Structure probing data (DMS and 2A3) for a 207-nucleotide construct. The reactions ran in a buffer of 150 mM KOAc, 10 mM MgCl2 and 150 mM bicine (pH 8.5), at 24 C. The DMS profile rests on 3,451 reads.
RNA sequence: GGGAACGACUCGAGUAGAGUCGAAAAAUGACCAAACAGUACAGGACUUAGAAAUGACCAUGUAGGGAAGCCUAAUAAAGUCAGUCUACCAGUGGUAAGUAUUGAGAACCUAUGACCUAUGUACAUUUCUGUAAAAGACACCAGGGUGGAUGUAGCAAGGUAAAAUUAUCUUCGGAUAAUUUUACCUAAAAGAAACAACAACAACAAC
Reactivity to DMS in 0.01 (KOAc 150mM, MgCl2 10mM, bicine 150mM(pH8.5), 24C), signal-to-noise 2, nucleotides 027 to 156: a040u010g020a130c010c010a160a070a210c040a060g000u000a050c030a110g030g020a140c050u000u000a050g000a050a080a080u010g010a090c050c050a190u000g000u000a080g030g000g000a060a070g010c010c010u010a050a110u010a070a050a110g000u000c040a090g020u000c050u000a070c020c060a120g000u000g010g020u010a050a180g000u010a070u000u010g000a140g000a080a100c030c080u010a060u010g010a110c080c020u000a030u010g010u000a060c030a080u020u000u000c040u020g000u000a050a060a060a100g000a090c020a050c150c010a050g030g020g040u000g000g010a040u000g000u000a050g030c060a080
Reactivity to 2A3 in 0.01 (KOAc 150mM, MgCl2 10mM, bicine 150mM(pH8.5), 24C), signal-to-noise 3, nucleotides 027 to 156: a000u060g020a030c020c000a070a030a020c060a060g040u120a010c020a040g000g080a030c030u100u120a030g060a080a090a070u020g010a000c010c050a020u100g030u080a080g000g010g030a050a040g000c000c020u090a120a060u150a100a060a040g060u110c030a040g020u000c010u030a060c030c030a040g030u020g060g030u070a070a070g030u040a100u110u140g060a060g020a040a050c000c000u030a100u150g030a050c000c000u020a010u110g030u020a030c010a050u040u120u010c030u010g050u050a040a040a050a050g070a050c040a020c040c020a020g000g050g000u030g000g010a020u020g020u030a030g070c070a060
Source information: For 2A3, 1,614 sequencing reads were counted.